[RMDB]
RNA sequence: GGGAACGACUCGAGUAGAGUCGAAAAUACUUAGUACGCGCGUAGUUGCAGGUAUUCCGGGUGCAGCAACUGACGCGGAAGACUUUUCCCAGAGUGUGCGCUUCAACUGGCGUGCUGAGUAGUGCACGAAUUGCACGUACGUUCGCGUACGUGCAAAGAAGUUACGAGCAUUCGUGCUCGUAACUUCAAAAGAAACAACAACAACAAC
Reactivity to 2A3 in 0.01 (KOAc 150mM, MgCl2 10mM, bicine 150mM(pH8.5), 24C), signal-to-noise 3, nucleotides 027 to 156: u070a000c000u020u000a010g000u010a000c000g000c020g010c020g010u020a020g000u000u000g030c020a050g050g070u070a060u180u100c080c110g130g070g030u080g000c030a040g000c010a040a000c000u140g050a020c020g010c020g040g000a000a010g160a090c040u170u140u050u000c000c000c000a000g010a020g000u160g000u010g000c010g010c000u050u040c060a300a300c090u030g050g000c020g000u000g000c010u000g000a000g000u040a010g010u020g000c010a010c060g040a060a070u080u020g000c000a010c000g000u000a010c000g020u020u030c140g000c010g090u000a000c000g010u000g000c010a000a010a010
Reactivity to DMS in 0.01 (KOAc 150mM, MgCl2 10mM, bicine 150mM(pH8.5), 24C), signal-to-noise 1, nucleotides 027 to 156: u000a050c040u000u010a050g020u000a170c020g030c030g010c070g020u000a050g000u010u020g060c030a190g020g030u000a050u020u010c070c120g000g090g050u000g040c010a300g020c050a020a050c030u000g050a000c040g000c030g010g010a080a110g000a090c080u010u000u010u000c000c010c020a160g020a190g000u010g000u000g010c000g010c030u000u000c030a160a160c110u020g000g060c040g000u000g010c000u010g000a050g030u000a040g040u000g000c030a040c000g000a090a140u010u000g040c000a030c000g010u010a000c000g020u000u000c300g030c020g020u000a050c010g000u000g020c000a000a020a110
The data come from the RNA Mapping Database (RMDB), library M2RFOK. Chemical mapping of a 207-nucleotide RNA with 2A3 and DMS.